[RMDB]
RNA sequence: GGGAACGACUCGAGUAGAGUCGAAAAGAAUCAGCACAGAGGCCGCACAUUCGCAGAAAAGGAGCGCCAGGGAGGCACGGAGCCUGGCACGAAUGGAAAGCUCUUUGGUCUUGUUUUGAACCGCCUAAUACGCUACCUCAUUCGUGAGGUAGCGUAUAAAAGAAACAACAACAACAAC
Reactivity to DMS in 0.01 (KOAc 150mM, MgCl2 10mM, bicine 150mM(pH8.5), 24C), signal-to-noise 1, nucleotides 027 to 126: g010a080a080u000c040a110g000c000a110c130a080g000a050g010g100c040c060g010c300a210c090a010u000u020c080g040c080a140g010a100a040a130a150g000g000a070g020c100g010c000c050a050g020g020g000a030g010g000c060a010c080g000g010a080g020c010c030u000g020g010c030a180c100g020a040a030u000g030g000a090a170a100g000c020u020c000u000u000u000g020g020u000c010u000u000g020u000u000u000u000g040a040a130c120c120g010c070c020u010a100
An RNA of 177 nucleotides, treated with DMS and read out base by base. High DMS reactivity at an A or C suggests that its Watson-Crick edge is free. Values cover nucleotides 27 to 126. The data come from the RNA Mapping Database (RMDB), library OK2TST. The RNA was probed in 150 mM KOAc, 10 mM MgCl2 and 150 mM bicine (pH 8.5) at 24 C. Reactivities are rounded to 0.1 and cut off at 0 and 3.